[RMDB]
RNA sequence: GGGAACGACUCGAGUAGAGUCGAAAACUUGGGUCACACUGUUCACAUCAGGGGAGACCUUGCCUUGGGGACGUAGGCGGGCCUCUUGCAACUUGUGCUGUUGACCUUCUGUCUUGUGGAACUCUCUCUCCUGCAUCUGCUACCUGCCCGCAGAUGGAAAAGUAGUCGGAUUCGUCCGACUACUUUUAAAAGAAACAACAACAACAAC
Reactivity to 2A3 in 0.01 (KOAc 150mM, MgCl2 10mM, bicine 150mM(pH8.5), 24C), signal-to-noise 1, nucleotides 027 to 156: c010u030u040g020g000g010u010c020a060c020a000c050u060g070u210u150c100a050c040a070u090c030a020g000g000g010g000a010g120a120c000c000u020u300g000c000c020u020u080g050g000g020g010a050c100g040u040a000g010g010c000g000g000g000c000c000u030c000u060u080g050c010a120a120c070u130u130g010u030g100c040u030g030u110u020g040a050c000c000u050u020c040u030g060u000c000u060u170g050u090g050g040a140a110c000u010c000u000c000u030c030u000c060c010u060g000c010a040u000c020u030g000c000u050a110c030c080u100g060c070c040c030g090c000a010g000a020u040g000g020